[RMDB]
RNA sequence: GGGAACGACUCGAGUAGAGUCGAAAACUGCAGCCUGUAGCUGUGACGCGAUUUUUAAUGCGUAGGGUAGGAAGGAGCCGUAGAUGUUUCGGUCGUGGCCAGAAUGGAGGCAACGAUGAAACACUUCCAAAUGUUGUCACUUCGGUGACAACAUUUGAAAAGAAACAACAACAACAAC
Reactivity to 2A3 in 0.01 (KOAc 150mM, MgCl2 10mM, bicine 150mM(pH8.5), 24C), signal-to-noise 6, nucleotides 027 to 126: c040u020g010c000a020g030c010c020u160g070u170a030g000c000u000g050u080g060a000c010g020c000g040a090u010u030u010u040u300a190a110u210g030c020g020u030a030g050g010g030u040a080g040g040a080a040g030g030a020g000c030c000g010u040a020g020a220u050g020u020u000u000c050g030g010u000c010g000u010g030g000c000c000a040g090a260a130u300g160g060a070g030g000c010a030a000c020g010a010u030g020a000a000a010c010a010c010u040u030c020
Reactivity to DMS in 0.01 (KOAc 150mM, MgCl2 10mM, bicine 150mM(pH8.5), 24C), signal-to-noise 5, nucleotides 027 to 126: c050u010g000c030a070g010c030c080u030g010u030a120g010c010u030g010u020g000a080c030g020c020g010a050u020u020u030u020u040a080a090u020g010c010g030u010a100g000g010g000u000a080g000g000a080a050g010g000a110g010c070c050g000u010a040g010a130u010g000u010u000u000c000g020g050u000c020g030u000g000g000c010c010a140g010a120a190u020g030g010a160g000g000c000a040a000c020g020a020u000g010a020a020a020c010a050c080u010u000c080

Conditions: 150 mM KOAc, 10 mM MgCl2 and 150 mM bicine (pH 8.5), 24 C. An RNA of 177 nucleotides, treated with 2A3 and DMS and read out base by base. The data come from the RNA Mapping Database (RMDB), libraries RFM100 and RFMREP. For DMS the reverse transcriptase was MarathonRT. Values cover nucleotides 27 to 126.